This 170-nucleotide RNA was probed chemically with DMS and 2A3. The data come from the RNA Mapping Database (RMDB), library 15KLIB. For DMS, 7,965 sequencing reads were counted. For DMS the reverse transcriptase was MarathonRT. The 2A3 profile rests on 13,976 reads.

[RMDB]
RNA sequence: GGGAACGACUCGAGUAGAGUCGAAAAAAGACGUUCCAUAUCCUAAGCAAUCUAUUUUUACUAUUAAUAGUGUGGUCCAAAAGGAUGGUGUUGAAAACACUCCUCCUCACUAUUUUACUCUUGGAUGACAGUUUCUCCUUCGGGAGAAACAAAAGAAACAACAACAACAAC
Reactivity to DMS in 0.01 (KOAc 150mM, MgCl2 10mM, bicine 150mM(pH8.5), 24C), signal-to-noise 3, nucleotides 027 to 129: a170a070g020a190c040g060u010u030c010c010a080u020a050u020c020c040u030a100a040g030c100a070a060u070c100u000a070u040u030u020u050u070a130c000u050a000u130u040a050a030u020a020g020u060g020u000g030g030u090c090c120a000a000a000a000g020g010a100u020g050g040u000g040u000u070g050a170a100a060a080c000a000c010u010c010c010u010c000c020u010c020a090c010u000a040u000u020u030u080a000c130u040c070u000u020g000g000a030u050g010a030c140a090
Reactivity to 2A3 in 0.01 (KOAc 150mM, MgCl2 10mM, bicine 150mM(pH8.5), 24C), signal-to-noise 5, nucleotides 027 to 129: a000a000g100a010c010g010u000u000c000c000a000u010a010u040c020c040u070a010a010g020c010a050a060u090c030u150a300u060u110u010u070u090a120c050u060a050u210u070a010a000u000a010g000u000g010u000g040g080u090c120c080a100a060a020a000g000g010a010u110g070g090u030g060u000u070g180a070a040a030a000c000a010c020u030c000c000u000c000c000u000c000a000c000u000a020u000u090u030u030a070c000u040c040u060u020g060g020a040u050g040a030c030a030